An RNA of 177 nucleotides, treated with 2A3 and DMS and read out base by base. DMS adducts were read by reverse transcription with MarathonRT. The data come from the RNA Mapping Database (RMDB), library OK2TST. Conditions: 150 mM KOAc, 10 mM MgCl2 and 150 mM bicine (pH 8.5), 24 C.
RNA sequence: GGGAACGACUCGAGUAGAGUCGAAAAGGCUGUGCAGCCACCAGCAGCGUGGGCAUAAAUAUCAGCACCAGCGCGAUGCCAGUGUUCUUCAACGAUGGCGGGCAAACGUCGCGGUUGAUAAAGCGCGCUUAAGUGAAAGCUUCGGCUUUCACUUAAGAAAAGAAACAACAACAACAAC
Reactivity to 2A3 in 0.01 (KOAc 150mM, MgCl2 10mM, bicine 150mM(pH8.5), 24C), signal-to-noise 4, nucleotides 027 to 126: g040g000c050u050g030u150g130c060a040g070c010c010a020c010c010a020g090c030a010g010c020g050u050g000g050g000c060a030u130a130a160a020u160a060u050c030a020g040c060a040c050c030a040g030c010g020c010g030a010u050g020c010c010a040g010u030g060u110u050c050u110u090c050a090a050c060g060a050u100g170g000c000g000g020g000c030a160a180a040c040g060u100c040g050c010g040g000u020u020g010a010u050a040a130a020g050c020g000c000g000
Reactivity to DMS in 0.01 (KOAc 150mM, MgCl2 10mM, bicine 150mM(pH8.5), 24C), signal-to-noise 7, nucleotides 027 to 126: g020g020c030u010g030u010g010c090a140g020c030c020a170c040c030a140g000c100a080g010c050g050u000g010g010g010c060a090u010a060a080a130u000a040u000c070a050g000c070a070c090c040a100g020c020g000c030g010a170u000g010c020c020a040g010u010g000u000u000c050u000u010c190a080a070c170g000a050u000g010g000c010g010g010g000c060a030a070a080c040g010u010c000g020c050g000g010u000u000g000a050u010a030a090a140g010c030g010c060g010